[RMDB]
An RNA of 207 nucleotides, treated with 2A3 and DMS and read out base by base. The DMS profile rests on 2,764 reads. High DMS reactivity at an A or C suggests that its Watson-Crick edge is free. For 2A3 the reverse transcriptase was SuperScript II with manganese.
RNA sequence: GGGAACGACUCGAGUAGAGUCGAAAAAACACGAGUGUUUUACCGCUACCAAAGGGAUCACUCAAGAUGAAACUAUUGCUAUAAUAUUGUGCCGUCUUGCGUCCACUAUUGCCUUUUUUGAUUGUCAUAGUGCGCGAUUUCUCAACUUCAAGCAUUGACAUCCUGCAUGAUUCGUCAUGCAGGAUGUAAAAGAAACAACAACAACAAC
Reactivity to 2A3 in 0.01 (KOAc 150mM, MgCl2 10mM, bicine 150mM(pH8.5), 24C), signal-to-noise 4, nucleotides 027 to 156: a000a000c170a020c030g000a020g010u040g060u020u040u050u160a190c030c000g030c080u120a140c050c070a160a100a050g050g010g000a040u060c020a000c020u010c020a000a030g030a030u130g050a080a060a030c070u050a060u090u080g000c040u050a030u090a290a090u150a120u110u080g050u070g060c060c000g060u030c030u020u070g010c000g000u060c040c010a020c030u030a050u030u180g010c040c050u050u120u030u030u090u190g170a120u050u070g060u060c010a020u020a030g000u000g000c030g010c010g030a020u030u120u000c050u010c020a000a150c050u150u140c120a050a060g040c060a100u100u020g020
Reactivity to DMS in 0.01 (KOAc 150mM, MgCl2 10mM, bicine 150mM(pH8.5), 24C), signal-to-noise 1, nucleotides 027 to 156: a050a020c070a110c080g040a100g040u000g010u060u010u000u000a200c050c000g000c110u000a160c030c050a110a090a060g020g010g000a080u000c000a020c050u000c010a140a080g030a070u000g010a100a100a050c070u000a090u000u010g000c060u000a120u000a020a060u000a040u020u000g010u020g020c110c000g020u000c030u030u000g030c030g030u000c050c030a040c020u000a060u000u000g060c000c040u000u000u000u000u000u000g010a060u000u010g030u010c080a040u000a050g010u000g010c070g010c060g020a100u000u000u010c010u000c020a050a100c060u010u000c060a020a070g000c080a090u000u000g000